An RNA of 207 nucleotides, treated with 2A3 and read out base by base. Conditions: 150 mM KOAc, 10 mM MgCl2 and 150 mM bicine (pH 8.5), 24 C. For 2A3, 305 sequencing reads were counted.
[RMDB]
RNA sequence: GGGAACGACUCGAGUAGAGUCGAAAAUUUGAUGCACAAAAGUGUCUGUCAUUUAGAUGUAAUCCAAGGAAUCUAAUUUUCUUUCGUUGCCUAUGCUUUUGGUGUCAUAUCCCAGAAAGCAUUGCCCAAUCUGAUGUCAUGAAAGUGUGGCCAAUGAUAAUCACGUCCCUUUCGAGGGACGUGAUUAAAAAGAAACAACAACAACAAC
Reactivity to 2A3 in 0.01 (KOAc 150mM, MgCl2 10mM, bicine 150mM(pH8.5), 24C), signal-to-noise 1, nucleotides 027 to 156: u090u050u000g000a020u000g000c010a010c100a260a000a000a000g000u020g010u110c150u080g060u300c100a090u090u270u300a130g000a000u030g040u140a150a060u000c000c080a020a000g050g030a070a000u050c080u250a140a080u180u030u000u000c010u050u080u020c040g140u130u080g030c000c020u050a000u140g000c010u050u000u010u000g060g000u050g000u000c000a000u000a090u090c000c000c020a000g050a050a090a000g000c000a000u020u020g030c000c000c000a010a050u020c180u110g050a080u110g200u170c150a000u090g160a050a020a170g080u050g020u050g000g050c070c000a040a060u000g000a020